[RMDB]
RNA sequence: GGGAACGACUCGAGUAGAGUCGAAAAGUUGGGGCAGACGGGUAAAAAUCCAAAGAAUAGAGACAAUCCGCAGCUGACCUGGCCAAAAGUAUAUUUACAAAGUAGCUAGGCAGUUCAACGCUCGCUAAGAUGUGGGUUGACCAUUAAUGGUCGGCUUGACGACUAUAGUGUUCGCACUAUAGUCGUCAAAAGAAACAACAACAACAAC
Reactivity to 2A3 in 0.01 (KOAc 150mM, MgCl2 10mM, bicine 150mM(pH8.5), 24C), signal-to-noise 1, nucleotides 027 to 156: g000u020u020g000g000g020g000c000a020g020a030c000g000g040g020u180a080a140a000a030a050u150c080c000a150a110a000g120a120a100u120a060g040a000g010a090c050a050a110u020c020c020g000c030a000g010c020u040g140a300c010c000u010g000g020c020c000a020a100a000a010g020u020a050u010a080u120u300u040a050c020a030a050a000g000u000a020g010c000u000a000g000g030c000a000g010u000u020c010a100a070c050g000c020u050c020g000c040u040a020a180g040a100u050g000u060g040g000g000u030u080g030a020c020c000a060u060u210a120a080u170g020g020u000c000g000g060c020u020u040